[RMDB]
RNA sequence: GGGAACGACUCGAGUAGAGUCGAAAAUUUGCCCAGUUCUAAUCAAUUUGUAGUGACUGCCAGAUCUCUAGCUGGACAAGAUUCUAAGGCAGGUCUGGCUUCAGGGAGGGUGCUGGGAUUGAUUAGUGAUGUCUGCUCUGGGUGCAAGAGGAGAGAACACCGUCCAUAAUUUCGAUUAUGGACGGUGAAAAGAAACAACAACAACAAC
Reactivity to DMS in 0.01 (KOAc 150mM, MgCl2 10mM, bicine 150mM(pH8.5), 24C), signal-to-noise 1, nucleotides 027 to 156: u000u010u000g010c010c010c000a140g020u010u000c030u050a040a050u020c040a030a080u000u000u000g010u000a090g020u010g010a070c050u000g000c010c010a080g010a060u000c020u000c080u000a130g080c040u000g000g020a230c040a060a110g030a300u000u010c050u000a110a180g020g010c080a120g040g040u000c020u000g040g010c030u010u000c050a070g040g010g000a120g000g000g000u010g040c050u010g020g020g090a100u000u000g020a050u000u000a070g000u000g030a120u010g020u000c100u000g040c030u000c030u000g020g030g000u000g000c080a040a060g000a180g010g000a090g010a160g000a090a300
Reactivity to 2A3 in 0.01 (KOAc 150mM, MgCl2 10mM, bicine 150mM(pH8.5), 24C), signal-to-noise 3, nucleotides 027 to 156: u100u050u120g020c010c010c000a010g030u060u000c020u020a020a040u030c030a030a070u060u150u230g150u160a090g020u030g120a060c070u030g030c020c010a020g000a080u010c030u010c050u180a050g040c020u050g010g030a020c020a030a090g080a200u280u010c030u130a020a070g050g000c040a030g000g060u000c000u010g010g000c000u010u010c010a010g000g000g010a080g010g000g040u080g070c040u050g040g000g010a000u030u050g030a020u000u030a020g020u030g130a110u090g060u040c070u030g020c010u000c000u050g000g030g000u050g020c040a030a020g010a010g060g040a050g020a000g030a050a000